[RMDB]
RNA sequence: GGGAACGACUCGAGUAGAGUCGAAAAGAUAUGGAUUGAUGAAGGGACUCGUAAGGACGAAGAACCAAUGCUGGUCGGAAACGACCAGCAUUGGGGAGUCCUUAUGUUGCCUUAUCAAUCCUAAGUCGAUAUCUAAACUGUUCGCAGUUUAGAUAUCAAAAGAAACAACAACAACAAC
Reactivity to DMS in 0.01 (KOAc 150mM, MgCl2 10mM, bicine 150mM(pH8.5), 24C), signal-to-noise 4, nucleotides 027 to 126: g010a080u000a300u010g010g010a010u000u000g000a010u000g010a020a020g000g000g000a140c210u000c060g030u000a000a010g020g020a020c000g010a110a210g010a160a280c000c000a010a010u010g010c000u000g000g010u010c000g010g000a130a110a250c000g000a020c010c010a010g000c000a000u000u000g000g010g000g000a040g010u000c000c000u000u000a000u000g010u000u000g000c010c000u000u010a020u000c000a010a010u000c000c000u000a020a090g010u010c100
Reactivity to 2A3 in 0.01 (KOAc 150mM, MgCl2 10mM, bicine 150mM(pH8.5), 24C), signal-to-noise 3, nucleotides 027 to 126: g050a010u180a060u300g020g010a010u020u020g010a030u110g230a040a090g070g000g110a180c070u030c130g010u010a010a000g010g010a000c010g120a300a110g020a040a010c030c000a000a000u010g030c000u010g030g000u000c020g010g030a140a110a070c010g010a000c000c000a020g000c010a000u000u000g000g000g000g010a000g000u000c000c000u000u000a000u010g010u040u080g150c000c000u010u020a000u000c000a000a000u000c010c000u010a140a000g050u030c060
Chemical mapping of a 177-nucleotide RNA with DMS and 2A3. The reactions ran in a buffer of 150 mM KOAc, 10 mM MgCl2 and 150 mM bicine (pH 8.5), at 24 C. The data come from the RNA Mapping Database (RMDB), library TTRINS.